[RMDB]
RNA sequence: GGGAACGACUCGAGUAGAGUCGAAAAAAGCGGACCAUUGAGAACAUGCAUAGUCUUAGUCGGUCGUUGAUACGCUUCUACCAUACCCGCGAGCCUAGACUUUGUAGCUUCCGAUGCAGCACCGGCGGAGACAGGAGAUGUUCGCAUCUCCUGUCUCAAAAGAAACAACAACAACAAC
Reactivity to 2A3 in 0.01 (KOAc 150mM, MgCl2 10mM, bicine 150mM(pH8.5), 24C), signal-to-noise 1, nucleotides 027 to 126: a000a000g090c040g030g020a080c010c000a010u020u020g050a040g010a100a010c010a110u160g020c080a090u180a140g010u010c030u040u050a040g020u030c070g000g000u000c040g050u050u070g030a030u070a160c020g000c020u050u010c010u100a120c030c010a000u120a120c040c020c010g020c050g050a010g010c000c000u040a080g010a100c000u000u070u130g020u000a030g000c040u030u000c020c060g060a010u060g030c080a010g040c030a080c030c010g010g020c060g040
Reactivity to DMS in 0.01 (KOAc 150mM, MgCl2 10mM, bicine 150mM(pH8.5), 24C), signal-to-noise 2, nucleotides 027 to 126: a040a050g010c000g030g000a040c070c000a060u000u050g020a080g000a040a100c060a120u010g010c160a100u010a120g000u000c010u010u000a010g010u000c110g050g000u000c060g040u010u000g000a140u010a180c080g000c030u000u000c100u000a150c060c060a120u010a080c030c040c020g000c130g010a080g000c050c030u000a090g010a080c030u020u010u010g000u000a050g000c060u000u000c030c050g010a090u000g040c080a050g000c050a060c090c020g000g020c160g000